About this RNA:
Chemical mapping of a 207-nucleotide RNA with 2A3. 2A3 adducts were read by reverse transcription with SuperScript II with manganese. The data come from the RNA Mapping Database (RMDB), library M2RFPK.
RNA sequence: GGGAACGACUCGAGUAGAGUCGAAAACAUUGUUCUGAUCAUCUGAAGAUCAGCUAUUAGAAGAGAAAGAUCAGUUAAGUCCUUUGGACCUGAUCAGCUUGAUACAAAAACUACUGAUUUCAACUUCAAAACGGGUGCUACUUCGGUAGCACCCGAAGUGUUAGAUGUGCUUCGGCACAUCUAACACAAAAGAAACAACAACAACAAC
Reactivity to 2A3 in 0.01 (KOAc 150mM, MgCl2 10mM, bicine 150mM(pH8.5), 24C), signal-to-noise 1, nucleotides 027 to 156: c010a050u090u110g040u120u030c000u000g010a000u000c010a000u080c130u170g280a160a090g000a000u010c000a000g000c000u110a110u250u160a240g000a110a050g010a000g010a040a140a000g020a000u050c000a000g000u110u180a300a000g000u010c040c110u100u280u300g010g000a000c000c020u110g000a110u000c010a020g060c000u030u090g000a050u040a110c060a090a010a070a130a020c110u120a000c000u000g030a110u060u000u080c050a060a010c050u010u110c080a020a160a000a080c020g000g000g000u000g010c000u000a000c000u000u050c170g130g000u000a000g000c000a000c000c000c000g000a000a000